The record gives the reactivity of an RNA of 207 nucleotides to 2A3 and DMS. The data come from the RNA Mapping Database (RMDB), library RNAMAK. DMS adducts were read by reverse transcription with MarathonRT. Conditions: 150 mM KOAc, 10 mM MgCl2 and 150 mM bicine (pH 8.5), 24 C.
RNA sequence: GGGAACGACUCGAGUAGAGUCGAAAAUUCUAGAUUCGUCUAGAAGGCUGGUCCUAAGUCUGGCAUUCCGAUGAAACCGUUUGUCAGUCGGAAACGACUUGGAUUUAACGGUGGAGGAGGGCCAGAUAUGGAGUUUAAGUGCAAUUCGUUGCACUAAAAUACUGAAAUAUUUCGAUAUUUCAGUAUUAAAAGAAACAACAACAACAAC
Reactivity to 2A3 in 0.01 (KOAc 150mM, MgCl2 10mM, bicine 150mM(pH8.5), 24C), signal-to-noise 3, nucleotides 027 to 156: u020u000c000u000a000g000a030u050u040c130g030u000c100u010a000g010a010a010g060g020c150u200g110g090u060c010c000u030a150a060g030u000c010u020g000g010c010a030u030u000c010c010g140a300u010g010a030a010a000c000c000g000u010u000u030g000u010c000a000g000u000c000g040g000a120a100a080c010g000a010c000u070u160g110g030a030u250u170u100a000a010c000g000g000u000g010g010a020g000g000a000g000g000g000c000c010a000g000a000u000a000u010g070g010a070g020u110u220u200a090a000g000u020g020c000a010a000u050u080c230g120u130u040g010c000a000c000u010a010a050
Reactivity to DMS in 0.01 (KOAc 150mM, MgCl2 10mM, bicine 150mM(pH8.5), 24C), signal-to-noise 4, nucleotides 027 to 156: u000u000c010u000a010g010a070u000u010c250g030u000c010u000a010g010a030a040g020g020c060u000g020g010u000c020c010u010a060a230g010u000c000u000g010g000c010a110u010u000c010c010g000a140u000g000a240a170a080c010c040g000u000u000u000g010u000c000a140g000u000c020g010g000a130a140a220c010g010a030c010u010u000g030g010a050u000u000u010a010a030c000g010g000u010g000g020a120g020g010a050g010g010g030c000c000a010g010a020u000a110u000g020g010a160g010u010u000u000a070a060g020u000g020c000a020a090u000u010c270g030u000u010g020c000a030c010u000a020a080